RNA sequence: GGGAACGACUCGAGUAGAGUCGAAAAGAUAUGGACUCAAUGAGACUGUGGUCAUAGGGAGCUCCACUUUCGGAAACGAAAGGAGAGCGAAGAACUAUGAGCCACAGUCUCAUUGAGUCCUAAGUCAGAAUUAUUAACACUUCGGUGUUAAUAAUUCAAAAGAAACAACAACAACAAC
Reactivity to DMS in 0.01 (KOAc 150mM, MgCl2 10mM, bicine 150mM(pH8.5), 24C), signal-to-noise 2, nucleotides 027 to 126: g010a070u000a300u000g010g010a010c010u000c000a000a020u000g010a000g020a000c010u010g040u000g000g010u000c000a020u000a000g000g000g000a100g020c000u000c000c230a270c000u010u000u000c000g020g010a110a110a260c020g020a010a030a010g010g000a300g000a000g000c010g010a060a110g000a130a200c000u010a010u000g000a190g010c000c010a000c000a020g000u000c000u000c000a000u000u000g010a010g010u000c010c000u000a000a070g010u010c050a150